[RMDB]
RNA sequence: GGGAACGACUCGAGUAGAGUCGAAAAUCCAUUAAACUAUGCAGAAUAGUGUUCUGGACCAUAAGGCUCUGGUGAAAGACCCUUUCUUGUACGGAUUUGUCUUACAAUAUCAUCCUGGAGAUAGAUAAAUAUGGCCGGAUUUCGAUCCGGCCAUAUUAAAAGAAACAACAACAACAAC
Reactivity to DMS in 0.01 (KOAc 150mM, MgCl2 10mM, bicine 150mM(pH8.5), 24C), signal-to-noise 1, nucleotides 027 to 126: u060c020c000a110u000u010a020a030a050c050u000a010u020g020c300a090g000a100a050u000a040g010u020g000u000u000c160u020g020g000a120c070c040a090u020a040a230g000g000c020u010c020u000g060g060u000g000a080a080a010g000a090c000c190c040u000u000u000c060u060u000g020u080a050c070g000g050a050u000u000u000g010u020c010u040u000a100c260a050a080u000a030u000c020a050u080c050c070u000g000g000a000g000a260u020a030g000a020u010a020
Reactivity to 2A3 in 0.01 (KOAc 150mM, MgCl2 10mM, bicine 150mM(pH8.5), 24C), signal-to-noise 2, nucleotides 027 to 126: u000c000c000a000u000u010a040a040a000c020u020a020u040g000c030a100g080a300a000u100a040g020u020g060u060u120c000u000g000g000a010c080c000a130u130a120a080g000g000c000u000c020u010g030g040u040g110a160a020a000g030a050c000c000c000u040u030u010c040u160u030g140u080a090c190g080g000a070u030u100u040g160u000c110u020u160a060c160a050a110u070a000u130c010a000u100c000c080u010g050g000a040g020a040u130a110g040a000u140a010

Chemical mapping of a 177-nucleotide RNA with DMS and 2A3. The reactions ran in a buffer of 150 mM KOAc, 10 mM MgCl2 and 150 mM bicine (pH 8.5), at 24 C. DMS adducts were read by reverse transcription with MarathonRT. For DMS, 1,048 sequencing reads were counted. The data come from the RNA Mapping Database (RMDB), library OK1LIB.